Structure probing data (DMS and 2A3) for a 207-nucleotide construct.
The RNA was probed in 150 mM KOAc, 10 mM MgCl2 and 150 mM bicine (pH 8.5) at 24 C.
RNA sequence: GGGAACGACUCGAGUAGAGUCGAAAAUCUCUAAUGAGACAUAUACACAUUGAUCUCUGUUUUAUCUGACAUAAAAAUGGCAUUUGUAAUCUGUGCCUCAGUUAACAUACUUCAGCAUAUGGGGUAGGUGUGAGCUGUGUCCUACAAGGCAGGGCAAUCAUCGCAUAUCUUUCGAGAUAUGCGAUGAAAAAGAAACAACAACAACAAC
Reactivity to DMS in 0.01 (KOAc 150mM, MgCl2 10mM, bicine 150mM(pH8.5), 24C), signal-to-noise 3, nucleotides 027 to 156: u000c000u010c030u010a110a080u010g010a040g020a060c010a100u000a110u000a140c110a130c110a100u000u000g010a080u010c040u000c010u000g000u000u010u000u000a070u000c050u000g010a110c070a100u000a020a080a080a100a120u000g040g040c050a100u010u000u040g030u010a130a070u000c120u000g020u010g010c000c000u010c040a080g000u000u010a050a040c040a110u000a040c010u000u000c040a080g030c160a090u000a100u000g020g000g020g040u000a030g010g020u000g040u010g000a080g010c040u020g010u000g010u000c020c020u000a060c070a070a100g020g030c020a050g020g020g030c040a080a200
Reactivity to 2A3 in 0.01 (KOAc 150mM, MgCl2 10mM, bicine 150mM(pH8.5), 24C), signal-to-noise 4, nucleotides 027 to 156: u000c010u000c060u090a100a130u160g040a010g020a020c030a030u170a020u090a100c050a010c020a100u070u160g180a270u040c030u010c020u030g110u040u160u040u020a100u070c060u050g050a040c050a060u230a060a140a010a060a050u110g010g000c000a020u040u050u150g150u210a160a130u130c070u060g030u020g010c000c000u020c010a030g030u030u030a040a000c010a040u070a030c020u020u010c010a030g000c020a100u070a100u280g030g000g020g010u030a060g060g050u080g000u020g040a020g000c020u020g020u010g010u090c000c010u070a080c060a080a030g050g000c030a000g000g000g000c010a020a030
Values cover nucleotides 27 to 156. DMS adducts were read by reverse transcription with MarathonRT. For 2A3, 2,065 sequencing reads were counted.